Notes: The record gives the reactivity of an RNA of 207 nucleotides to 2A3. For 2A3 the reverse transcriptase was SuperScript II with manganese. Conditions: 150 mM KOAc, 10 mM MgCl2 and 150 mM bicine (pH 8.5), 24 C.
[RMDB]
RNA sequence: GGGAACGACUCGAGUAGAGUCGAAAAACCUUUGUGUGGAGGAGUGUGUAUGGAGCCGACCUUGAAAUACGAAUCCCAUUGGGAUUCGGAGGCUUUGAAGUACACCUCCGAUGAAACACUCUGGUAAAACGGUUCCAAUGUUCGCAUUGGAACCGAAGGUCAAACAUAGGUUCGCCUAUGUUUGACCAAAAGAAACAACAACAACAAC
Reactivity to 2A3 in 0.01 (KOAc 150mM, MgCl2 10mM, bicine 150mM(pH8.5), 24C), signal-to-noise 1, nucleotides 027 to 156: a000c000c000u000u000u030g000u020g020u010g000g010a000g010g000a000g010u280g000u000g000u010a010u050g030g010a020g000c000c000g090a110c040c030u200u250g150a130a080a100u260a090c000g000a000a000u030c000c000c160a300u150u300g020g000g000a000u000u000c000g010g040a050g000g000c000u090u090u280g100a120a030g010u010a000c000a000c000c000u010c010c020g000a010u010g000a000a020a000c010a000c000u000c020u000g000g000u060a080a050a050a090c010g000g000u000u000c010c000a010a000u030g020u080u030c260g000c120a030u000u000g000g010a000a010c000c000g010a030a010